[RMDB]
RNA sequence: GGGAACGACUCGAGUAGAGUCGAAAAACUGCAUCUACGGAUGCAGAACUACGUUCAUCCAAUUUAUUUGGACGCAUGAAAUGCGAAUAGGGAACGGGAUUCUCAUACGCAGGCUACGGCCUGCGAAAAAACUCCUUAUGCUUCGGCAUAAGGAGAACAUGAGGAUAUCGUUCGCGAUAUCCUCAUGAAAAGAAACAACAACAACAAC
Reactivity to DMS in 0.01 (KOAc 150mM, MgCl2 10mM, bicine 150mM(pH8.5), 24C), signal-to-noise 2, nucleotides 027 to 156: a120c000u000g040c000a000u000c030u020a160c290g070g020a000u000g000c030a030g000a040a070c010u000a000c000g020u000u000c010a050u010c060c050a070a100u000u000u010a150u060u000u000g010g000a010c010g090c020a100u000g010a110a110a300u000g040c050g000a110a200u010a130g030g070g000a020a010c000g050g000g000a300u010u000c000u000c000a140u010a150c000g020c000a000g000g000c000u010a080c220g040g020c000c000u010g000c000g010a000a000a050a030a030a090c000u000c000c000u010u000a000u000g000c000u000u020c230g030g000c000a010u000a010a020g030g010a000g000a000a020
Reactivity to 2A3 in 0.01 (KOAc 150mM, MgCl2 10mM, bicine 150mM(pH8.5), 24C), signal-to-noise 4, nucleotides 027 to 156: a000c000u000g000c000a010u000c010u020a040c230g140g000a000u000g000c000a000g000a020a010c020u050a050c010g000u010u000c020a020u010c030c000a030a020u050u200u190a120u080u150u060g000g000a010c010g010c000a020u140g200a140a270a120u060g040c000g040a080a040u080a160g150g030g010a000a000c000g000g010g030a060u050u000c020u000c010a050u090a110c010g000c000a000g000g000c000u030a110c290g100g000c000c010u000g010c010g000a030a000a000a010a000a000c000u000c000c000u000u000a000u010g000c000u030u040c190g110g010c000a000u000a000a000g000g000a000g000a000a000
The record gives the reactivity of an RNA of 207 nucleotides to DMS and 2A3. The DMS profile rests on 2,593 reads.